[RMDB]
RNA sequence: GGGAACGACUCGAGUAGAGUCGAAAAGCACGUAGGUUCAGAUGAUGGGCCCGCAUCUGUACGAAAGUGAGACGAAAGUCCAGCCUACGUGCAUGAGCACGCGGGCCCCGUGCUCAGCAGCAAAAGACAUGCACCUCCGAUUCGUCGGAGGUGCAUGAAAAGAAACAACAACAACAAC
Reactivity to 2A3 in 0.01 (KOAc 150mM, MgCl2 10mM, bicine 150mM(pH8.5), 24C), signal-to-noise 2, nucleotides 027 to 126: g000c000a000c010g000u000a000g040g000u130u130c050a000g000a060u060g000a020u070g000g000g000c030c020c010g000c000a000u000c000u060g090u110a090c110g090a100a050a110g070u050g010a120g000a060c000g050a130a040a000g000u000c010c000a010g000c000c000u010a000c000g000u000g000c020a000u010g020a000g000c000a000c030g000c040g020g010g000c000c000c000c000g000u000g000c000u000c000a020g030c000a020g020c080a130a000a000a000g150a130
An RNA of 177 nucleotides, treated with 2A3 and read out base by base. Source: RMDB library OK1LIB, as collected in RNAgym. Conditions: 150 mM KOAc, 10 mM MgCl2 and 150 mM bicine (pH 8.5), 24 C. For 2A3, 1,236 sequencing reads were counted.